[RMDB]
RNA sequence: GGGAACGACUCGAGUAGAGUCGAAAAUUAACAUCCUUCUACGCGUUUUUUAUUUGGAGAUCUGGAAGUGAACGAAGAGUUUAUGAUGUUUCAGAAAGAGGACGUCUUGCCGUAUAUGAAGGGGUUAUGGCGUGAGGCUUUUCAGUCAGUCUGCGGAGAUGCUAACCUAGUUCGCUAGGUUAGCAUCAAAAGAAACAACAACAACAAC
Reactivity to DMS in 0.01 (KOAc 150mM, MgCl2 10mM, bicine 150mM(pH8.5), 24C), signal-to-noise 1, nucleotides 027 to 156: u000u000a070a100c300a210u000c010c020u020u000c000u010a110c050g010c030g020u020u000u000u000u010u020a110u000u080u010g000g000a060g010a060u000c020u000g020g000a170a060g030u020g010a050a030c020g020a090a130g000a160g020u000u000u000a080u050g010a090u000g000u000u000u000c030a120g010a050a070a110g000a060g010g010a010c130g020u000c050u000u000g030c030c020g000u010a050u000a080u000g010a040a070g050g030g050g020u000u000a050u000g020g020c040g000u010g000a060g010g010c030u000u030u000u000c050a090g030u000c030a050g000u010c050u010g000c000g000g000a300
Reactivity to 2A3 in 0.01 (KOAc 150mM, MgCl2 10mM, bicine 150mM(pH8.5), 24C), signal-to-noise 2, nucleotides 027 to 156: u060u030a040a000c150a160u060c010c000u030u080c030u070a040c050g040c030g070u030u020u030u050u060u120a180u190u050u090g050g020a050g010a030u000c020u060g040g030a070a040g030u060g090a070a000c030g020a080a080g010a020g050u080u120u070a100u080g030a030u060g110u040u010u040c060a060g090a060a070a000g080a020g010g000a000c030g030u000c070u070u110g020c040c000g040u070a080u000a030u090g070a020a020g000g000g000g060u090u060a020u110g020g010c020g020u050g020a040g090g010c010u000u070u100u140c010a000g050u020c000a000g030u010c000u030g030c030g050g010a050